[RMDB]
RNA sequence: GGGAACGACUCGAGUAGAGUCGAAAAGACCAUGUGGCAUUCAAUUUCCACAAAAGGCUUAAAUUGGUCGAACCUGACUUGACAAUGGUGGAUGUCAAAGUGGAUUCUUCCAGAGCAGGAAAGUUACCUCUCCGUACGCCUUCGGGCGUACGGAGAGAAAAGAAACAACAACAACAAC
Reactivity to 2A3 in 0.01 (KOAc 150mM, MgCl2 10mM, bicine 150mM(pH8.5), 24C), signal-to-noise 1, nucleotides 027 to 126: g060a000c000c000a010u000g000u090g040g150c040a000u160u120c050a300a300u140u040u000c000c000a000c000a010a020a020a020g000g000c000u000u000a280a110a300u080u000g000g000u000c000g000a000a000c000c000u000g060a090c090u000u180g000a050c050a000a040u000g020g060u150g300g000a070u000g000u030c100a100a100a000g120u120g000g000a040u090u100c000u000u000c050c050a000g000a000g080c020a000g130g030a280a000a000g000u090u110a120c000
The record gives the reactivity of an RNA of 177 nucleotides to 2A3.
Source: RMDB library OK1LIB, as collected in RNAgym.
Reactivities are given for positions 27 through 126.
The RNA was probed in 150 mM KOAc, 10 mM MgCl2 and 150 mM bicine (pH 8.5) at 24 C.